[RMDB]
RNA sequence: GGGAACGACUCGAGUAGAGUCGAAAAAUUGCUUGGUUUAAAGUGAAUGUCAGACAAUAUCACAGUGUGUACCCUUGUGAUUUGGCAUUUAGUACGAUGUUCAAAAUGCUGCAGUAUUCAUGGGAUGCCACGGGACUAUAUUCGUAUAGUCCCGUGGAAAAGAAACAACAACAACAAC
Reactivity to 2A3 in 0.01 (KOAc 150mM, MgCl2 10mM, bicine 150mM(pH8.5), 24C), signal-to-noise 1, nucleotides 027 to 126: a010u090u150g030c010u010u090g060g090u150u180u040a070a080a000g060u080g080a020a010u020g010u030c010a000g060a160c050a090a080u060a030u180c020a000c040a060g010u000g020u010g050u280a180c050c000c000u000u130g040u000g010a020u030u020u100g020g030c030a000u020u090u110a000g000u000a020c060g020a060u100g080u050u090c010a010a020a010a100u090g050c030u000g000c010a020g010u030a090u040u070c040a090u010g020g020g080a030u200g030
Reactivity to DMS in 0.01 (KOAc 150mM, MgCl2 10mM, bicine 150mM(pH8.5), 24C), signal-to-noise 2, nucleotides 027 to 126: a070u000u010g030c020u000u000g000g010u010u020u010a090a110a140g020u000g010a040a020u000g030u000c040a080g020a070c160a070a090u000a040u000c030a020c030a020g000u030g020u010g030u010a120c100c050c020u010u010g020u000g000a030u000u000u000g000g010c020a030u000u010u000a070g010u000a100c100g000a080u000g000u010u000c030a060a030a060a100u010g010c050u000g000c060a050g020u020a080u000u010c070a030u000g000g000g000a150u000g010
The record gives the reactivity of an RNA of 177 nucleotides to 2A3 and DMS. Reactivities are given for positions 27 through 126. For 2A3 the reverse transcriptase was SuperScript II with manganese. The reactions ran in a buffer of 150 mM KOAc, 10 mM MgCl2 and 150 mM bicine (pH 8.5), at 24 C. It was measured as part of the RMDB library OK2TST. For DMS the reverse transcriptase was MarathonRT.